[RMDB]
RNA sequence: GGGAACGACUCGAGUAGAGUCGAAAAGAUAUGGACUCGGAAUUGGGAGCUACCCCGGAUCGGAAACGAUCCCGGCGUAGCUUUGAUCAAUCCGAGUCCUAAGUCAAAAGGUGCGUUCGCGCACCAACAUUCUUGUUUUCUUCGGAAAACAAGAAUGAAAAGAAACAACAACAACAAC
Reactivity to 2A3 in 0.01 (KOAc 150mM, MgCl2 10mM, bicine 150mM(pH8.5), 24C), signal-to-noise 2, nucleotides 027 to 126: g010a020u090a020u160g010g010a020c000u000c030g020g060a300a300u040u020g040g050g020a000g020c000u000a000c080c030c040c020g000g020a010u000c000g010g020a110a060a070c000g010a010u060c150c060c040g030g020c070g010u000a000g000c000u030u040u010g000a020u020c000a000a000u000c010c010g040a000g000u010c000c010u000a000a000g020u000c000a010a010a000a210g000g000u010g000c000g020u040u120c300g000c010g000c160a000c010c000a010a010
Reactivity to DMS in 0.01 (KOAc 150mM, MgCl2 10mM, bicine 150mM(pH8.5), 24C), signal-to-noise 5, nucleotides 027 to 126: g010a030u000a300u010g000g000a010c000u000c000g010g010a070a090u000u010g010g000g010a000g020c010u000a010c000c110c000c160g000g010a030u000c000g020g000a130a120a230c010g010a000u000c090c030c100g010g000c300g030u000a000g020c000u000u000u010g000a090u020c010a010a020u010c010c000g000a010g010u000c010c000u000a010a070g000u000c030a100a090a140a110g010g020u000g010c010g010u000u010c230g030c010g010c010a020c000c000a070a070